[RMDB]
RNA sequence: GGGAACGACUCGAGUAGAGUCGAAAAGAGCUUUUUUUCGAAAAAGCUCCGGCGCAAUGCCUAUGUGUACACUUCUCAAGGGUUUGUGGUGGUCAAUGGCAAUACCAGCAAUCUUCGGAUUGCUGAACCUAAACACAAGAUUCGUCUUGUGUUUAGGAAAAGAAACAACAACAACAAC
Reactivity to 2A3 in 0.01 (KOAc 150mM, MgCl2 10mM, bicine 150mM(pH8.5), 24C), signal-to-noise 2, nucleotides 027 to 126: g000a000g000c000u000u020u010u010u020u050u140c120g040a010a010a000a000a010g010c010u010c010c000g060g010c040g000c070a100a100u150g000c000c020u100a120u130g110u010g030u040a050c050a020c050u110u050c080u030c090a060a110g160g020g030u050u160u070g080u120g010g020u010g010g000u040c030a040a090u050g010g000c000a030a040u080a190c060c010a000g000c000a000a000u000c000u010u080c190g100g010a000u010u000g000c000u010g010a000a000
Reactivity to DMS in 0.01 (KOAc 150mM, MgCl2 10mM, bicine 150mM(pH8.5), 24C), signal-to-noise 8, nucleotides 027 to 126: g000a020g010c000u000u000u000u000u000u000u010c140g010a020a010a010a010a010g010c000u000c000c070g010g000c050g010c080a090a060u010g010c020c040u000a070u000g010u000g010u000a090c090a060c100u000u000c020u000c060a100a120g010g010g010u000u000u000g020u000g010g020u000g010g010u000c050a040a060u000g010g010c060a070a080u000a080c180c010a010g010c000a000a000u000c000u000u010c190g010g000a010u000u000g010c000u000g000a040a090
The record gives the reactivity of an RNA of 177 nucleotides to 2A3 and DMS.
The RNA was probed in 150 mM KOAc, 10 mM MgCl2 and 150 mM bicine (pH 8.5) at 24 C.